[RMDB]
RNA sequence: GGGAACGACUCGAGUAGAGUCGAAAACAGUGAUGGAAACAUCACUGAAAAACCGGAAACGGACAUGACGAUUGCGCGCAUGUCGGGAAACCGUAAACGCGAAAAGAGCUAGCGAAAGCUAGCUCAAAGUGAUGAUAGGAUUCGUCCUAUCAUCACUAAAAGAAACAACAACAACAAC
Reactivity to 2A3 in 0.01 (KOAc 150mM, MgCl2 10mM, bicine 150mM(pH8.5), 24C), signal-to-noise 8, nucleotides 027 to 126: c010a000g000u000g000a000u000g000g040a030a030a010c000a000u000c000a000c000u000g010a030a000a000a010a000c020c020g060g020a120a100a020c060g070g020a010c010a010u040g060a060c020g110a150u050u300g040c090g000c000g000c030a010u010g010u020c010g020g010g020a110a050a010c010c000g020u090a070a140a020c060g040c050g070a050a070a030a090g000a000g000c000u000a000g000c010g050a090a010a000g000c000u000a020g000c000u000c000a000a000
Reactivity to DMS in 0.01 (KOAc 150mM, MgCl2 10mM, bicine 150mM(pH8.5), 24C), signal-to-noise 5, nucleotides 027 to 126: c000a010g010u010g000a000u000g010g000a180a170a160c000a000u000c000a000c000u000g010a020a060a040a180a130c150c000g000g020a070a120a230c020g000g000a060c030a010u010g000a110c040g000a190u030u040g020c090g010c050g010c040a080u010g000u000c010g030g000g000a100a110a230c120c030g010u020a040a080a080c080g010c100g000a060a060a120a140g000a000g010c000u000a000g000c000g000a060a100a120g010c010u000a010g000c000u000c000a010a040
Conditions: 150 mM KOAc, 10 mM MgCl2 and 150 mM bicine (pH 8.5), 24 C. Structure probing data (2A3 and DMS) for a 177-nucleotide construct. 2A3 adducts were read by reverse transcription with SuperScript II with manganese. It was measured as part of the RMDB library OK1LIB.